[RMDB]
RNA sequence: GGGAACGACUCGAGUAGAGUCGAAAAUGUUUUGGUUACUGUAGCCUUGUAGUAUAGUUUGAAGUCAGGUAGUAUGAUGCCUCCAGCUUUGUUCUUUUGGCUUAGGAUUGACUUGGUGAUGUAGGCUCUAUUUUGGUUCCAUAUGAACUUUAAAGUAUAUAGUGAAGUGGUUCGCCACUUCACUAUAAAAAGAAACAACAACAACAAC
Reactivity to DMS in 0.01 (KOAc 150mM, MgCl2 10mM, bicine 150mM(pH8.5), 24C), signal-to-noise 2, nucleotides 027 to 156: u020g020u000u000u000u000g020g000u010u000a020c030u000g020u010a100g020c040c030u000u000g010u020a080g010u000a060u010a060g030u000u000u010g010a050a090g010u000c040a100g040g010u000a070g010u000a080u010g010a100u000g000c020c020u030c050c030a100g020c050u010u000u010g020u000u010c020u000u000u000u010g010g020c030u000u020a080g020g010a090u000u010g010a040c040u000u010g040g030u000g010a100u010g020u000a140g020g010c030u000c030u000a060u000u000u000u010g020g010u010u000c010c030a110u000a130u000g000a020a050c060u000u000u010a040a050a130g000u000a130
Reactivity to 2A3 in 0.01 (KOAc 150mM, MgCl2 10mM, bicine 150mM(pH8.5), 24C), signal-to-noise 1, nucleotides 027 to 156: u060g020u020u050u060u090g040g000u030u060a030c060u040g010u100a010g020c010c000u010u040g050u030a030g020u000a020u000a030g090u080u050u080g080a130a040g020u080c050a020g060g010u040a000g020u080a060u150g060a060u060g060c040c010u000c040c000a010g020c000u060u030u110g080u000u060c000u050u160u030u040g000g000c000u010u070a090g090g000a060u020u110g010a020c010u050u020g000g000u020g020a100u040g010u040a010g010g000c030u030c010u060a030u010u020u000u030g000g020u000u010c000c010a010u050a110u150g080a030a020c040u090u060u110a030a050a000g010u050a020